Background
Chemical mapping of a 177-nucleotide RNA with 2A3 and DMS. The reactions ran in a buffer of 150 mM KOAc, 10 mM MgCl2 and 150 mM bicine (pH 8.5), at 24 C. The DMS profile rests on 4,952 reads. For 2A3, 8,871 sequencing reads were counted.
RNA sequence: GGGAACGACUCGAGUAGAGUCGAAAAGAUAUGGAAUCCGCCAGGGAGAGUGUCGGAAACGAUAAACUCGAGGAUCUGGUCGGAUUCCUAAGUCAAAGUUGAGUUUGACUUCGGUCAAACUCAACAAGAUAAUGGAUUGGUUCGCCAAUCCAUUAUCAAAAGAAACAACAACAACAAC
Reactivity to 2A3 in 0.01 (KOAc 150mM, MgCl2 10mM, bicine 150mM(pH8.5), 24C), signal-to-noise 3, nucleotides 027 to 126: g010a020u060a040u130g000g010a000a010u000c000c000g000c000c010a000g000g000g010a030g000a000g010u020g010u000c000g020g020a070a050a030c010g000a000u070a180a300a070c000u010c010g030a300g020g010a010u000c010u010g000g070u140c070g000g000a000u000u000c000c000u000a020a010g020u000c040a180a030a050g010u010u010g010a010g000u000u000u000g010a020c000u100u100c300g040g000u000c010a000a000a000c000u000c000a000a000c000a000a000
Reactivity to DMS in 0.01 (KOAc 150mM, MgCl2 10mM, bicine 150mM(pH8.5), 24C), signal-to-noise 4, nucleotides 027 to 126: g010a040u000a300u000g000g000a010a010u000c010c000g020c020c000a010g000g000g000a030g010a030g020u000g010u000c000g020g010a110a080a170c010g000a010u000a070a090a120c000u000c000g010a080g020g000a020u010c010u000g000g000u010c040g010g000a000u000u000c000c000u000a020a060g000u000c040a120a100a160g000u010u000g000a010g010u000u000u000g000a020c000u000u010c170g010g000u000c000a000a000a000c000u000c000a000a010c000a070a060